[RMDB]
An RNA of 177 nucleotides, treated with 2A3 and DMS and read out base by base. The reactions ran in a buffer of 150 mM KOAc, 10 mM MgCl2 and 150 mM bicine (pH 8.5), at 24 C. For 2A3 the reverse transcriptase was SuperScript II with manganese. Values are in units of 0.01, from 0 to 300, in steps of 10.
RNA sequence: GGGAACGACUCGAGUAGAGUCGAAAAAUCCACUAUCUUUAAGAAGGAUGACGGUGCUGAGGAUUUUGUUGAAGUCCACCUUCCUGACGUGCAAAAGCAGAUCUCGGGGAUUGACCUAGGUCUUCCCCUGCAGUACACUAUUCGUAGUGUACUGCAGAAAAGAAACAACAACAACAAC
Reactivity to 2A3 in 0.01 (KOAc 150mM, MgCl2 10mM, bicine 150mM(pH8.5), 24C), signal-to-noise 1, nucleotides 027 to 126: a040u030c030c010a030c040u130a130u110c080u000u140u090a110a130g050a030a010g050g000a030u050g010a000c050g000g000u070g000c020u050g000a080g050g030a090u000u000u130u190g200u090u110g130a020a010g030u010c020c010a030c050c010u010u060c000c000u030g020a020c040g090u050g000c010a000a010a100a100g000c020a030g000a110u040c040u040c060g020g020g000g010a020u010u120g020a010c010c000u020a080g040g030u000c000u020u000c000c000c010
Reactivity to DMS in 0.01 (KOAc 150mM, MgCl2 10mM, bicine 150mM(pH8.5), 24C), signal-to-noise 4, nucleotides 027 to 126: a070u010c020c010a150c160u000a060u000c020u010u000u010a130a110g010a180a070g000g000a030u010g010a070c070g010g000u000g020c070u010g000a100g010g000a040u000u010u000u000g000u020u010g000a060a090g000u000c040c030a100c090c050u000u000c030c020u000g010a110c120g000u000g010c070a050a060a090a130g000c080a040g010a060u000c040u000c070g020g000g010g010a070u000u000g020a020c030c020u010a130g020g010u000c020u000u000c000c010c000